[RMDB]
RNA sequence: GGGAACGACUCGAGUAGAGUCGAAAAAGUUUAGAUUUCGAUCUAAACUAGACCACUAAGAGGAUGACGAGUGACUACGACGCAUCUAGUAGAAUGCGCCCAGCUGUGAGCAGUUCGCUGCUCACAAACUUGGUUAUGCCUUCGGGCAUAACCAAGUAAAAGAAACAACAACAACAAC
Reactivity to 2A3 in 0.01 (KOAc 150mM, MgCl2 10mM, bicine 150mM(pH8.5), 24C), signal-to-noise 1, nucleotides 027 to 126: a020g000u020u000u000a000g000a000u130u030u040c170g050a020u030c010u020a000a000a000c000u000a000g030a030c040c040a000c040u100a160a050g040a010g220g000a000u090g050a100c040g010a000g060u030g070a080c070u030a010c130g130a010c020g010c010a020u050c050u060a050g050u020a010g060a250a040u120g030c040g030c030c000c030a040g050c090u060g000u000g010a000g010c000a010g000u040u050c160g000c080u000g000c000u000c000a000c000a000a000
Reactivity to DMS in 0.01 (KOAc 150mM, MgCl2 10mM, bicine 150mM(pH8.5), 24C), signal-to-noise 2, nucleotides 027 to 126: a000g010u010u000u000a000g000a010u000u000u000c160g020a030u000c000u010a000a010a020c010u000a050g000a170c020c010a140c110u010a080a090g030a070g000g010a080u000g000a020c010g000a060g010u000g000a130c050u010a110c030g000a090c070g000c030a060u000c030u000a140g000u000a080g030a140a050u000g010c060g000c000c030c230a070g000c160u000g000u000g010a010g000c000a000g000u000u000c210g020c010u010g010c000u000c000a000c000a000a040
Structure probing data (2A3 and DMS) for a 177-nucleotide construct. The data come from the RNA Mapping Database (RMDB), library M2PK50. The RNA was probed in 150 mM KOAc, 10 mM MgCl2 and 150 mM bicine (pH 8.5) at 24 C.